[RMDB]
RNA sequence: GGGAACGACUCGAGUAGAGUCGAAAACUGGAGUCAAGCUGCGAUUGGCUCAUCAUAAAACGGAGGUGGUGCUGGUCAGCGACUGCAAGAUGGUUCAGCAGUUGGAGAUCAACGUCGGAGGACACGAACCCUGCUAGGUAUUCGUACCUAGCAGGGUAAAAGAAACAACAACAACAAC
Reactivity to 2A3 in 0.01 (KOAc 150mM, MgCl2 10mM, bicine 150mM(pH8.5), 24C), signal-to-noise 2, nucleotides 027 to 126: c040u050g080g010a000g020u000c020a030a000g000c020u080g060c070g230a170u010u080g010g000c030u000c010a050u090c000a020u140a040a070a000a010c040g080g000a010g020g050u050g040g020u020g000c030u020g000g000u040c020a040g070c020g040a010c030u010g000c040a000a090g120a130u140g130g080u130u080c080a040g030c000a040g070u010u040g070g080a110g000a040u070c020a010a060c000g030u020c050g070g030a030g010g040a020c030a010c070g040a010
Reactivity to DMS in 0.01 (KOAc 150mM, MgCl2 10mM, bicine 150mM(pH8.5), 24C), signal-to-noise 2, nucleotides 027 to 126: c040u020g000g020a040g010u000c050a090a050g020c070u010g020c110g010a160u000u000g010g020c010u000c040a030u000c140a060u010a050a090a070a130c140g010g040a090g040g010u030g000g020u010g000c050u000g030g010u010c040a090g020c040g010a030c040u000g050c020a040a070g000a070u010g010g000u020u020c070a150g000c040a030g020u000u000g010g010a100g010a030u000c040a040a060c110g000u000c070g010g010a080g020g010a120c120a070c120g000a070
The record gives the reactivity of an RNA of 177 nucleotides to 2A3 and DMS. For DMS the reverse transcriptase was MarathonRT.